[RMDB]
RNA sequence: GGGAACGACUCGAGUAGAGUCGAAAAUCUGGUGUGUCAUCCUUUAGUGAACUACUUUUUGAUUGCGUUGAUCUUUCAGUAGCUUCUACCUAUUUUUUAGUCCGCAUCUUGCAAGAUAAGACUGGCGUUAGCUUUGCGUUCGCGCAAAGCAAAAGAAACAACAACAACAAC
Reactivity to 2A3 in 0.01 (KOAc 150mM, MgCl2 10mM, bicine 150mM(pH8.5), 24C), signal-to-noise 8, nucleotides 027 to 129: u040c030u050g010g000u010g030u020g030u010c020a050u060c020c020u050u070u120a110g020u060g070a030a020c000u020a020c020u070u040u010u030u080g050a030u020u060g100c150g120u090u300g030a070u020c000u010u050u000c010a010g000u010a020g030c050u040u040c010u040a080c020c000u050a180u060u070u040u010u010u100a050g030u040c030c000g020c040a030u010c040u020u090g020c040a100a030g020a110u090a050a020g020a040c040u020g040g020c040g040u060u120a050
Reactivity to DMS in 0.01 (KOAc 150mM, MgCl2 10mM, bicine 150mM(pH8.5), 24C), signal-to-noise 6, nucleotides 027 to 129: u040c050u030g000g000u020g050u030g000u060c000a070u040c110c060u010u020u070a070g040u040g030a060a110c030u030a070c000u010u040u010u000u010g030a080u000u000g050c100g080u090u070g020a060u010c030u040u030u010c050a020g000u030a040g020c130u030u020c030u000a100c130c070u010a030u020u010u000u000u020u010a140g040u000c030c060g040c140a070u000c060u000u080g030c110a140a100g020a070u040a060a080g030a100c070u040g000g000c160g000u030u050a100

Record summary: This 170-nucleotide RNA was probed chemically with 2A3 and DMS. The reactions ran in a buffer of 150 mM KOAc, 10 mM MgCl2 and 150 mM bicine (pH 8.5), at 24 C. For 2A3, 14,605 sequencing reads were counted. Values are in units of 0.01, from 0 to 300, in steps of 10.